[RMDB]
Description
Chemical mapping of a 177-nucleotide RNA with DMS and 2A3. For DMS the reverse transcriptase was MarathonRT. The RNA was probed in 150 mM KOAc, 10 mM MgCl2 and 150 mM bicine (pH 8.5) at 24 C. For DMS, 812 sequencing reads were counted.
RNA sequence: GGGAACGACUCGAGUAGAGUCGAAAACAUCCACUGCUACGGCAGUGGAUGAACGAGGUAGGUACGCCUACCUCGAAAGGAGGAUGUAUUCAUAUACAUUAAACGUCCAUGGUACGCCAUGGACGAAUACCACCACCAGUUUCGACUGGUGGUGGUAAAAAGAAACAACAACAACAAC
Reactivity to DMS in 0.01 (KOAc 150mM, MgCl2 10mM, bicine 150mM(pH8.5), 24C), signal-to-noise 1, nucleotides 027 to 126: c000a010u000c000c000a030c000u000g000c000u000a160c220g060g000c000a000g000u010g000g000a000u000g000a000a080c060g000a020g020g000u000a000g020g000u030a070c300g060c030c010u010a010c020c000u000c020g000a010a110a210g000g020a070g000g000a000u000g020u000a000u000u070c170a200u000a100u000a000c000a010u020u000a040a090a140c020g020u000c000c000a000u020g000g000u000a200c150g040c000c000a000u000g020g000a000c020g010a040a000
Reactivity to 2A3 in 0.01 (KOAc 150mM, MgCl2 10mM, bicine 150mM(pH8.5), 24C), signal-to-noise 1, nucleotides 027 to 126: c000a000u000c000c000a000c000u000g000c020u060a060c130g170g000c000a000g000u000g000g000a000u000g000a010a030c040g000a000g000g000u000a000g010g000u050a030c300g030c030c000u000a000c000c000u010c010g010a020a010a010g090g050a060g010g070a030u020g030u050a020u080u260c190a070u120a000u010a300c000a010u070u070a140a120a060c010g000u000c030c000a000u030g000g030u030a070c280g050c000c000a000u010g000g000a000c000g000a020a000